About this RNA
Conditions: 150 mM KOAc, 10 mM MgCl2 and 150 mM bicine (pH 8.5), 24 C. Chemical mapping of a 207-nucleotide RNA with 2A3. It was measured as part of the RMDB library OK3TST. Values cover nucleotides 27 to 156. The 2A3 profile rests on 769 reads.
[RMDB]
RNA sequence: GGGAACGACUCGAGUAGAGUCGAAAAUUGGAAAAAUAAUCUGGCGUAAUAUAAAUGUCUCAGCGCAUUGGCAUGGCCGAUGGUCGCUGCAUCACCGACUUUGUCGGCAGUCGCAUCCAGUUUGACUACCUCAAGGCGAAGCAGGGUAUCGCCAUGGCCCUCGGUACACGUUCGCGUGUACCGAGGGAAAAGAAACAACAACAACAAC
Reactivity to 2A3 in 0.01 (KOAc 150mM, MgCl2 10mM, bicine 150mM(pH8.5), 24C), signal-to-noise 2, nucleotides 027 to 156: u050u000g000g040a000a070a020a040a210u160a070a110u030c030u070g010g000c000g050u040a100a080u080a070u040a040a160a010u100g060u040c060u050c170a050g020c040g000c030a040u010u010g080g000c070a120u110g110g000c000c020g000a000u020g000g040u260c040g000c020u020g050c020a020u020c020a000c020c000g000a040c040u030u070u250g040u010c000g000g020c010a030g050u020c040g000c060a040u010c010c010a000g000u000u030u160g000a000c000u050a130c000c000u040c040a110a090g000g000c000g020a020a010g060c010a040g000g120g000u020a020u010c000g000c000c000a000u040g020g010